[RMDB]
RNA sequence: GGGAACGACUCGAGUAGAGUCGAAAAUUCUUCCUUUUUCAUUCUCUCAAUUGUUCUUUUUAUUUGAGGAAAUUUGAUUGUAUUGCAUAUACAACUAUGCGAUGCACUUUGUUCAUUUUAACUUUGGCCCAAUGCUAUGCUUCGGCAUAGCAUUGGGAAAAGAAACAACAACAACAAC
Reactivity to 2A3 in 0.01 (KOAc 150mM, MgCl2 10mM, bicine 150mM(pH8.5), 24C), signal-to-noise 2, nucleotides 027 to 126: u020u010c000u010u010c010c010u030u000u020u030u090c070a080u100u030c160u000c000u010c030a050a050u050u000g090u100u050c120u020u300u070u240u300a150u100u020u060g030a040g000g120a000a110a090u240u050u100g060a070u000u010g000u000a000u020u000g000c000a000u100a000u000a080c030a030a100c020u000a000u010g000c000g000a000u000g000c000a000c040u040u060u090g120u000u120c050a120u080u000u070u040a060a120c040u090u000u000g140g010